[RMDB]
This 177-nucleotide RNA was probed chemically with DMS and 2A3. For DMS the reverse transcriptase was MarathonRT. The 2A3 profile rests on 1,832 reads. Values cover nucleotides 27 to 126.

RNA sequence: GGGAACGACUCGAGUAGAGUCGAAAACCAAGAUUCCAUAACUCACUACCCAGCUCUUAAGAUGGUUCAAACACAUCUUAGCCACUAUGUUCUUAACAUAGAUUGGUUGUGGUUUGCAUUUGAGACUAUCGAUGAACAUGUUCGCAUGUUCAUCGAUAAAAGAAACAACAACAACAAC
Reactivity to DMS in 0.01 (KOAc 150mM, MgCl2 10mM, bicine 150mM(pH8.5), 24C), signal-to-noise 1, nucleotides 027 to 126: c010c010a130a080g000a090u000u000c030c020a030u000a040a050c040u000c050a010c070u000a150c060c040c010a150g000c210u020c100u000u020a020a030g000a000u030g030g000u010u010c140a050a020a040c100a070c050a070u000c100u000u000a060g000c010c030a020c000u000a020u000g000u000u000c300u000u000a010a020c000a000u000a000g000a200u000u010g000g030u000u000g000u010g020g010u000u000u000g010c180a110u000u000u000g030a050g010a180c140u000
Reactivity to 2A3 in 0.01 (KOAc 150mM, MgCl2 10mM, bicine 150mM(pH8.5), 24C), signal-to-noise 2, nucleotides 027 to 126: c020c010a020a020g100a110u120u050c030c010a050u030a090a080c000u020c050a000c020u050a060c010c000c010a030g030c010u020c020u130u020a000a020g010a030u020g000g040u090u090c040a080a090a010c040a010c000a090u020c000u040u020a010g000c010c000a010c020u010a000u010g010u050u080c140u220u220a020a010c000a010u010a030g050a140u030u080g010g000u010u030g010u040g000g010u050u040u060g000c020a050u000u010u100g040a030g020a040c020u030